[RMDB]
The record gives the reactivity of an RNA of 207 nucleotides to DMS and 2A3.
RNA sequence: GGGAACGACUCGAGUAGAGUCGAAAACAGUGUACCACACCUGACAAACUUUGCCUUCACAAUUUUCAGACAACAAAUUUACUUCAACUUUAUUGAAAGUUUUGUAAGAAAGUAUGGUAGGAUUGUUCUAACAAGUAUAAGUAGCUUUGGUAGGUUAUCAAUACUCCGAGUUCGCUCGGAGUAUUGAAAAAGAAACAACAACAACAAC
Reactivity to DMS in 0.01 (KOAc 150mM, MgCl2 10mM, bicine 150mM(pH8.5), 24C), signal-to-noise 1, nucleotides 027 to 156: c020a110g000u020g000u000a060c020c030a040c020a020c040c000u010g010a030c020a090a080a090c030u010u000u010g040c090c000u000u000c050a170c050a040a080u010u000u010u010c000a120g000a110c050a070a070c070a060a120a090u010u000u000a040c060u000u020c040a030a040c030u000u000u000a170u080u020g000a070a030a080g000u000u000u000u010g010u000a080a070g000a110a070a110g020u010a040u000g000g030u000a070g010g000a110u000u000g030u000u000c070u010a050a090c030a050a070g010u000a030u000a040a130g000u000a030g020c020u000u000u000g020g000u000a070g010g000u000u010a070
Reactivity to 2A3 in 0.01 (KOAc 150mM, MgCl2 10mM, bicine 150mM(pH8.5), 24C), signal-to-noise 3, nucleotides 027 to 156: c030a040g020u020g000u130a020c010c010a010c000a020c030c020u030g050a010c040a030a160a030c060u070u060u070g030c010c000u030u060c040a030c000a180a080u050u060u050u070c030a020g080a110c030a090a030c020a040a260a120u120u110u070a040c040u050u040c020a070a020c020u140u200u270a110u110u290g110a060a010a010g020u070u030u050u090g030u040a040a060g020a100a030a000g030u070a080u120g030g020u030a050g010g020a040u040u020g020u080u030c000u040a040a030c020a000a050g060u050a060u020a220a060g050u040a010g000c060u040u050u020g010g020u050a060g000g060u020u080a060

Overview
The data come from the RNA Mapping Database (RMDB), library OK3TST. The DMS profile rests on 2,689 reads.